Chemical mapping of a 177-nucleotide RNA with 2A3 and DMS. It was measured as part of the RMDB library OK2TST. DMS adducts were read by reverse transcription with MarathonRT. Conditions: 150 mM KOAc, 10 mM MgCl2 and 150 mM bicine (pH 8.5), 24 C.

RNA sequence: GGGAACGACUCGAGUAGAGUCGAAAAGGCAUUGGUCAGUGCGGGGGCGCCCGGAGAUCCGCUGGCGGUAGCCAACGCGUCGUUGCAGGCCACCGCCCAGGCCACCCAGACCACGCUGGAUUUGGGCGUAUCUCGUCUGAUUCGUCAGACGAGAUACAAAAGAAACAACAACAACAAC
Reactivity to 2A3 in 0.01 (KOAc 150mM, MgCl2 10mM, bicine 150mM(pH8.5), 24C), signal-to-noise 2, nucleotides 027 to 126: g080g000c090a110u110u240g080g000u040c020a030g110u020g020c070g010g000g050g030g000c080g050c010c010c000g000g070a170g010a030u010c010c010g000c040u020g010g000c010g010g030u030a000g000c030c010a100a070c090g010c010g040u190c060g100u160u260g020c020a020g030g000c000c010a000c010c010g000c010c000c000a010g000g040c010c000a060c000c000c010a020g020a040c050c000a040c100g130c070u160g010g060a250u070u070u030g070g000g000c020
Reactivity to DMS in 0.01 (KOAc 150mM, MgCl2 10mM, bicine 150mM(pH8.5), 24C), signal-to-noise 2, nucleotides 027 to 126: g010g000c080a060u020u000g000g010u010c030a120g000u020g020c020g000g000g010g010g000c030g040c040c020c040g020g010a150g010a150u000c070c020g020c030u010g000g020c000g010g020u000a120g000c000c010a110a080c200g010c080g000u020c300g000u000u010g040c060a300g000g000c000c010a030c040c020g000c030c000c140a030g010g010c010c030a150c000c030c030a120g020a040c020c010a100c190g010c100u010g010g000a190u000u020u010g000g000g020c210